[RMDB]
Source information:
Chemical mapping of a 177-nucleotide RNA with 2A3 and DMS. 2A3 adducts were read by reverse transcription with SuperScript II with manganese. It was measured as part of the RMDB library OK2TST. For 2A3, 23,684 sequencing reads were counted.
RNA sequence: GGGAACGACUCGAGUAGAGUCGAAAACAGGGCCUGCAUGGUCAGCGCGGCGAAACCGCCCUCCACGACACGCCGCAGGCCUAGCUGGAGGAUGCGCUCGCGCAGCGCGGAAUCGCGUUGCAGGCGAGCCCGCUAAAUACUUCGGUAUUUAGCGGGCAAAAGAAACAACAACAACAAC
Reactivity to 2A3 in 0.01 (KOAc 150mM, MgCl2 10mM, bicine 150mM(pH8.5), 24C), signal-to-noise 8, nucleotides 027 to 126: c030a040g100g150g000c010c000u010g020c010a030u100g050g040u060c040a050g020c000g010c010g020g010c020g030a160a040a040c040c010g020c010c000c000u000c010c010a030c050g110a040c020a010c110g030c020c030g220c110a040g000g000c000c000u010a030g010c070u010g020g010a010g020g030a070u210g030c020g000c020u060c020g010c030g020c050a050g000c010g000c030g010g030a200a080u160c020g000c040g130u060u040g000c000a010g010g010c010g010a020
Reactivity to DMS in 0.01 (KOAc 150mM, MgCl2 10mM, bicine 150mM(pH8.5), 24C), signal-to-noise 9, nucleotides 027 to 126: c070a150g010g010g010c000c010u000g010c010a060u010g000g020u010c030a120g010c040g010c030g000g010c010g000a030a060a160c300c010g000c040c000c010u000c010c010a050c050g000a180c140a090c300g000c030c030g000c200a060g010g020c000c030u000a060g010c130u000g000g010a040g000g000a110u000g020c040g010c110u000c070g000c020g010c010a050g010c010g010c000g010g000a080a070u010c030g010c080g010u000u000g010c010a030g010g020c010g010a040